[RMDB]
RNA sequence: GGGAACGACUCGAGUAGAGUCGAAAAAGGCAAUUUGUUCGUUUGAUAUUUCAGCCUGGGAAUGAGUGUAUGGGGUGUUGGAAGCCGAACACAUGAGAGGCAUUUGUAUCAUUUCAGGUGGGGUGCCGAUAUUACGCGGAUUCGUCCGCGUAAUAUCAAAAGAAACAACAACAACAAC
Reactivity to 2A3 in 0.01 (KOAc 150mM, MgCl2 10mM, bicine 150mM(pH8.5), 24C), signal-to-noise 2, nucleotides 027 to 126: a000g020g000c020a020a080u000u000u050g020u030u020c020g020u000u010u070g030a050u030a060u080u110u010c040a000g000c000c000u020g000g010g010a030a020u060g000a010g030u020g010u020a020u100g020g000g000g000u010g010u050u020g030g010a060a000g020c000c030g020a030a010c000a000c010a040u060g020a050g000a000g060g030c000a000u030u020u060g010u010a020u010c010a020u020u020u060c010a020g000g030u000g000g020g000g000u020g000c000c040
Reactivity to DMS in 0.01 (KOAc 150mM, MgCl2 10mM, bicine 150mM(pH8.5), 24C), signal-to-noise 6, nucleotides 027 to 126: a040g000g000c020a140a070u020u010u010g000u000u000c100g020u010u010u000g000a080u010a080u010u000u010c070a100g000c020c020u010g010g000g020a060a080u020g000a040g000u000g000u020a070u010g020g000g000g010u000g010u020u020g000g010a080a100g010c020c020g000a090a100c050a060c080a050u030g010a090g010a160g000g000c030a070u010u020u010g000u020a060u020c060a100u010u010u010c130a060g000g020u010g000g000g000g010u010g010c050c060